Annotation:
The record gives the reactivity of an RNA of 177 nucleotides to 2A3 and DMS. DMS adducts were read by reverse transcription with MarathonRT. The DMS profile rests on 3,231 reads. The 2A3 profile rests on 3,149 reads.

RNA sequence: GGGAACGACUCGAGUAGAGUCGAAAAGGUGCGUAUAAAAUCCCAGGGGCGCCAGGAGGCAGCAGCGACGGCGCAGCGUGGGACGGCCAGGCGCGACGGGAGGGAAGCAACCGGUUGCAGUCCGGCCCCACUGUACCAGGUUCGCCUGGUACAGUGGAAAAGAAACAACAACAACAAC
Reactivity to 2A3 in 0.01 (KOAc 150mM, MgCl2 10mM, bicine 150mM(pH8.5), 24C), signal-to-noise 3, nucleotides 027 to 126: g070g020u100g030c030g000u070a050u040a230a100a040a080u040c000c000c010a000g030g010g020g010c010g000c020c010a050g070g100a100g070g030c050a080g000c010a010g030c080g080a060c040g020g000c030g000c020a020g080c030g130u030g000g000g020a030c030g010g020c020c000a050g000g000c000g000c010g030a010c020g010g000g020a090g050g030g020a050a010g080c030a020a020c010c000g040g010u060u070g010c040a040g020u000c000c000g000g000c000c000
Reactivity to DMS in 0.01 (KOAc 150mM, MgCl2 10mM, bicine 150mM(pH8.5), 24C), signal-to-noise 2, nucleotides 027 to 126: g000g020u040g010c000g000u000a150u040a070a110a070a150u000c010c000c020a100g000g020g010g010c030g020c030c000a040g000g000a210g000g000c020a100g040c070a050g040c000g000a200c080g000g030c000g020c020a040g000c010g030u000g000g000g000a080c090g000g010c050c010a020g000g030c030g010c010g000a070c000g010g000g000a160g000g000g050a120a110g010c100a130a080c000c000g000g000u020u040g020c050a080g000u000c000c040g000g020c040c020